[RMDB]
RNA sequence: GGGAACGACUCGAGUAGAGUCGAAAAGCUCGGAGACGAGCAAGGCUGACAAAACCCUGUCCCGACCUCCACGUGGUGUCGGCUGGAUAAUGCUGCAUUAUGUUGCAUUUAUCAACAGGGAAGGAAAGCACGCAUAAUGGUUCGCCAUUAUGCGUGCAAAAGAAACAACAACAACAAC
Reactivity to DMS in 0.01 (KOAc 150mM, MgCl2 10mM, bicine 150mM(pH8.5), 24C), signal-to-noise 1, nucleotides 027 to 126: g000c000u040c000g000g020a260g010a290c000g010a000g000c000a030a050g010g000c000u000g000a050c020a060a010a120a100c000c020c000u010g010u000c020c000c010g010a090c020c000u010c030c000a240c010g000u020g000g000u000g000u000c000g010g060c080u020g030g000a020u050a030a000u020g000c030u000g040c000a090u110u100a140u060g000u000u000g040c000a000u120u010u040a010u000c000a100a000c020a030g000g000g040a060a070g000g010a060a000a270
Reactivity to 2A3 in 0.01 (KOAc 150mM, MgCl2 10mM, bicine 150mM(pH8.5), 24C), signal-to-noise 3, nucleotides 027 to 126: g000c000u000c020g020g030a150g020a050c000g000a000g000c000a000a030g010g000c000u020g000a010c000a000a130a040a080c010c010c000u070g050u060c020c000c000g000a040c010c000u060c030c040a160c130g120u260g000g000u000g010u030c020g000g020c020u030g020g000a010u000a020a000u010g000c010u000g020c030a070u080u170a120u300g010u020u000g000c000a040u000u090u210a030u020c000a000a010c000a040g050g000g050a040a000g100g100a080a050a040

Structure probing data (DMS and 2A3) for a 177-nucleotide construct.
The 2A3 profile rests on 1,946 reads.
The RNA was probed in 150 mM KOAc, 10 mM MgCl2 and 150 mM bicine (pH 8.5) at 24 C.
The data come from the RNA Mapping Database (RMDB), library OK1LIB.